Chemical mapping of a 177-nucleotide RNA with 2A3 and DMS. DMS adducts were read by reverse transcription with MarathonRT. The DMS profile rests on 1,094 reads. The 2A3 profile rests on 1,431 reads.

[RMDB]
RNA sequence: GGGAACGACUCGAGUAGAGUCGAAAAGCGUACCUAGAGUGAUCCGAGUACUACGUACGAUCUAGGUACGAUCCAUGGUACACGAUCGUACUCGUAUGCAUGUAGUGCACUAUCGGAUCCAUGGAGGCAGCGUUUGAAUCUUCGGAUUCAAACGCUGAAAAGAAACAACAACAACAAC
Reactivity to 2A3 in 0.01 (KOAc 150mM, MgCl2 10mM, bicine 150mM(pH8.5), 24C), signal-to-noise 1, nucleotides 027 to 126: g040c040g040u030a050c000c020u060a090g030a070g140u280g040a050u030c030c020g040a060g070u020a010c030u010a010c060g040u000a010c010g040a060u080c030u080a040g000g070u000a000c020g000a000u070c020c010a110u120g150g000u160a160c170a030c000g020a000u000c050g040u000a020c000u000c060g050u090a080u180g080c140a080u160g010u050a000g030u000g050c010a020c040u110a070u110c010g010g000a010u050c000c010a020u020g030g010a020g070g010
Reactivity to DMS in 0.01 (KOAc 150mM, MgCl2 10mM, bicine 150mM(pH8.5), 24C), signal-to-noise 1, nucleotides 027 to 126: g000c060g000u000a040c010c010u000a050g030a110g020u020g000a040u000c030c040g020a070g000u000a040c030u020a070c070g020u000a020c020g000a070u000c080u000a080g010g000u000a000c010g000a000u000c010c110a080u000g000g000u010a060c170a210c160g000a010u000c060g020u000a020c010u000c060g010u010a020u000g010c080a080u000g010u000a030g040u000g000c040a120c180u000a280u000c000g000g000a060u000c000c050a110u010g000g000a040g020g010